[RMDB]
RNA sequence: GGGAACGACUCGAGUAGAGUCGAAAAACAUACGAUCUACGGAUCGUAUGACGACAAUGAUAGGAUAACCUAGAGUCUCUGAACCAUUUCGUGUUUGCAAAAACAAUGCUCCUUGUCUGAGUCAGAAGAACAGAUGAUAAUUCGUUAUCAUCUGUUCAAAAGAAACAACAACAACAAC
Reactivity to 2A3 in 0.01 (KOAc 150mM, MgCl2 10mM, bicine 150mM(pH8.5), 24C), signal-to-noise 9, nucleotides 027 to 126: a000c000a000u000a000c000g000a000u000c010u020a040c260g120g000a000u000c000g000u000a000u010g020a020c020g020a000c030a050a080u090g020a050u060a050g050g010a040u060a170a080c010c030u040a070g010a030g090u020c030u000c020u100g050a050a040c020c010a080u050u090u110c090g010u050g050u050u050u070g060c050a050a050a020a040a040c020a030a050u090g010c010u010c010c010u080u100g030u020c040u040g030a030g060u040c030a020g060a140a010
Reactivity to DMS in 0.01 (KOAc 150mM, MgCl2 10mM, bicine 150mM(pH8.5), 24C), signal-to-noise 9, nucleotides 027 to 126: a160c010a000u000a000c010g000a000u000c000u000a150c210g030g010a010u000c000g010u000a000u000g010a090c060g000a050c190a050a050u010g000a070u010a170g000g000a060u010a060a060c040c050u010a110g000a150g010u000c150u010c030u000g000a110a120c150c020a040u000u000u000c050g010u000g010u010u010u010g000c220a040a060a020a020a030c050a050a070u010g000c070u000c010c020u000u010g010u000c080u000g000a150g000u000c040a050g000a140a100